Chemical mapping of a 177-nucleotide RNA with DMS and 2A3. The reactions ran in a buffer of 150 mM KOAc, 10 mM MgCl2 and 150 mM bicine (pH 8.5), at 24 C. For 2A3, 1,661 sequencing reads were counted. Values cover nucleotides 27 to 126. For DMS, 1,372 sequencing reads were counted.
[RMDB]
RNA sequence: GGGAACGACUCGAGUAGAGUCGAAAAGAUAUGGAGCUUAGGGAGAGUUAAUAAUCGGAAACGAUUAUGCUCAUCGAUCUAAGAACUACUCCUAAGUCAAACGUGUCAACCUUCGGGUUGACACGAAUCAUUAUGCUGGCUUCGGCCAGCAUAAUGAAAAAGAAACAACAACAACAAC
Reactivity to DMS in 0.01 (KOAc 150mM, MgCl2 10mM, bicine 150mM(pH8.5), 24C), signal-to-noise 2, nucleotides 027 to 126: g010a030u000a290u010g000g020a030g020c000u000u000a000g000g010g000a070g020a020g000u000u010a060a050u000a000a000u000c000g000g000a060a100a130c000g000a000u000u000a000u000g000c010u000c000a220u010c080g030a060u000c000u000a040a020g000a090a080c080u000a300c020u000c000c000u000a060a220g000u010c100a070a090a120c000g010u000g020u000c000a000a000c020c040u000u000c210g010g000g000u000u000g010a010c000a000c000g020a030a060
Reactivity to 2A3 in 0.01 (KOAc 150mM, MgCl2 10mM, bicine 150mM(pH8.5), 24C), signal-to-noise 1, nucleotides 027 to 126: g020a020u050a020u120g020g000a010g000c000u000u010a010g000g000g000a040g000a000g050u080u150a240a040u000a000a010u020c000g010g020a070a070a020c000g000a000u000u010a000u030g020c010u000c000a260u260c030g040a020u000c000u000a030a000g030a000a000c070u130a070c000u090c000c000u040a130a050g040u030c050a080a050a090c000g000u010g000u060c020a000a000c000c000u000u020c300g160g050g000u010u020g000a000c000a000c000g030a000a000